[RMDB]
RNA sequence: GGGAACGACUCGAGUAGAGUCGAAAAUACAUUUUGUCUCUGUGGACCGAGGAGAAAAGGGGCUCGGCGGGAAGAGGAGUGUACCAUGAGAGAAGCAAGGAGGUCAACCUCUUUCAAAUAUACAACAACUCCUCUACAGGUUCGCCUGUAGAGGAGUAAAAGAAACAACAACAACAAC
Reactivity to DMS in 0.01 (KOAc 150mM, MgCl2 10mM, bicine 150mM(pH8.5), 24C), signal-to-noise 2, nucleotides 027 to 126: u000a110c090a120u020u010u010u020g000u000c010u000c000u000g020u060g000g000a160c040c040g020a040g000g020a120g020a030a000a050a200g000g030g020g010c130u000c010g010g030c050g020g020g010a070a050g000a040g000g000a160g000u000g000u020a060c060c010a140u000g000a170g000a120g030a050a170g020c180a060a110g030g000a130g010g000u020c220a090a110c000c010u000c010u010u000u020c010a020a090a040u020a060u030a080c140a040a180c190a100
Reactivity to 2A3 in 0.01 (KOAc 150mM, MgCl2 10mM, bicine 150mM(pH8.5), 24C), signal-to-noise 4, nucleotides 027 to 126: u130a010c030a000u020u060u090u200g150u000c000u000c010u020g070u060g090g090a110c030c060g020a070g020g050a120g090a090a190a020a040g030g000g020g000c000u020c040g040g000c020g020g060g020a020a050g010a020g060g000a070g020u060g010u030a060c030c010a040u130g030a080g000a010g010a270a000g100c090a070a040g070g010a060g000g070u080c020a150a220c000c000u040c000u000u000u020c040a030a030a010u200a050u060a060c100a110a010c010a030